[RMDB]
RNA sequence: GGGAACGACUCGAGUAGAGUCGAAAACAGAGCUAAUGAGCCACAUACCUACCCAAGGUGAAAGCUCCUUCUCUCGCAAUGUGUAACUCAUGAUUCUCAUGACCCCUGGUUGGAGAGAUCCGGACAAUAGACUAGAGGGUGUUCGCACCCUCUAGAAUCACUAGACUGUGUUCGCACAGUCUAGUGAAAAAGAAACAACAACAACAAC
Reactivity to DMS in 0.01 (KOAc 150mM, MgCl2 10mM, bicine 150mM(pH8.5), 24C), signal-to-noise 1, nucleotides 027 to 156: c070a080g000a100g050c070u000a150a090u000g040a100g070c000c030a050c060a150u010a070c070c020u000a170c130c020c080a100a160g000g000u010g030a050a120a150g010c020u000c000c040u000u000c010u000c030u010c070g070c130a100a030u000g000u000g000u000a070a070c020u000c030a090u000g000a150u010u010c090u000c000a100u010g000a070c030c020c000c050u000g000g030u000u000g010g000a030g000a090g000a080u000c020c010g000g010a110c010a050a160u000a070g000a190c020u000a000g030a010g010g010g030u000g050u000u010c250g000c000a020c000c000c000u000c010u010a000g000a020a120
Reactivity to 2A3 in 0.01 (KOAc 150mM, MgCl2 10mM, bicine 150mM(pH8.5), 24C), signal-to-noise 1, nucleotides 027 to 156: c070a050g020a020g060c020u070a140a080u150g030a050g030c070c000a020c040a040u300a020c000c000u000a030c000c000c060a120a020g030g000u020g030a080a000a020g010c000u000c010c010u060u040c050u000c000u020c040g070c140a050a080u030g120u080g030u150a000a060c000u010c000a010u010g030a260u300u040c090u050c100a030u030g000a050c000c000c000c100u120g090g000u060u000g020g000a070g020a020g000a070u020c020c070g000g010a000c010a060a130u040a170g180a130c000u000a020g000a000g010g000g000u000g040u180u000c060g020c030a000c010c000c000u000c000u000a000g000a000a010